[RMDB]
RNA sequence: GGGAACGACUCGAGUAGAGUCGAAAAGCGGCGACCGACCUGACGUUUCUCUGGAACGUCUAGCUCUCUUCGGCUGUGGUUCGGCAGUUGGGGAGACCUGCCGACCUGCAACAGGGGCUUCGGCACCGUCGCAGCUCCGUUUCGACGGAGCUGCGACAAAAGAAACAACAACAACAAC
Reactivity to 2A3 in 0.01 (KOAc 150mM, MgCl2 10mM, bicine 150mM(pH8.5), 24C), signal-to-noise 1, nucleotides 027 to 126: g030c000g010g040c010g020a110c020c000g010a040c010c120u030g010a000c030g050u010u060u020c220u030c170u210g070g030a000a010c000g000u010c030u040a010g030c020u000c020u010c060u080u060c060g060g040c090u020g000u010g020g180u070u030c020g060g000c000a000g010u110u130g000g010g000g070a040g050a070c000c010u000g000c010c000g010a050c000c020u020g000c020a100a090c020a110g000g050g000g000c000u020u030c010g000g000c070a060c020c010